[RMDB]
RNA sequence: GGGAACGACUCGAGUAGAGUCGAAAAUGCAAUCCCAUUGGUCUAGCUGCUGGUUUCGAUAAACAAGCCGAUGCUAUCUCAGGUUUGUUGAACUUCGGGUUUUCCUAUCUUGAAAUUGGCUCGGUCACGUCCUUUUACCAUUCGUGGUAAAAGGACGAAAAGAAACAACAACAACAAC
Reactivity to DMS in 0.01 (KOAc 150mM, MgCl2 10mM, bicine 150mM(pH8.5), 24C), signal-to-noise 3, nucleotides 027 to 126: u000g040c190a150a150u010c020c000c000a220u010u010g000g000u010c030u000a110g020c070u000g000c030u000g000g010u010u000u010c040g030a050u000a070a040a040c040a040a050g000c000c020g000a120u010g000c140u020a040u010c050u020c090a180g010g010u000u000u010g010u010u000g000a080a120c070u020u000c060g000g000g050u000u000u000u000c030c020u000a080u000c070u010u020g020a010a040a070u000u000g010g010c020u050c040g020g000u000c110a100
Reactivity to 2A3 in 0.01 (KOAc 150mM, MgCl2 10mM, bicine 150mM(pH8.5), 24C), signal-to-noise 2, nucleotides 027 to 126: u140g000c010a000a080u020c000c010c000a010u020u130g040g000u020c050u040a050g020c000u110g040c020u040g080g030u050u060u020c030g000a050u070a080a120a020c010a020a040g000c010c000g020a050u090g060c110u100a100u170c060u020c090a080g020g000u020u040u050g010u030u040g010a040a040c020u070u050c090g220g030g010u040u010u040u040c010c010u060a090u140c040u030u100g100a070a110a060u060u060g020g000c000u000c040g000g010u020c030a020

An RNA of 177 nucleotides, treated with DMS and 2A3 and read out base by base. The reactions ran in a buffer of 150 mM KOAc, 10 mM MgCl2 and 150 mM bicine (pH 8.5), at 24 C. 2A3 adducts were read by reverse transcription with SuperScript II with manganese.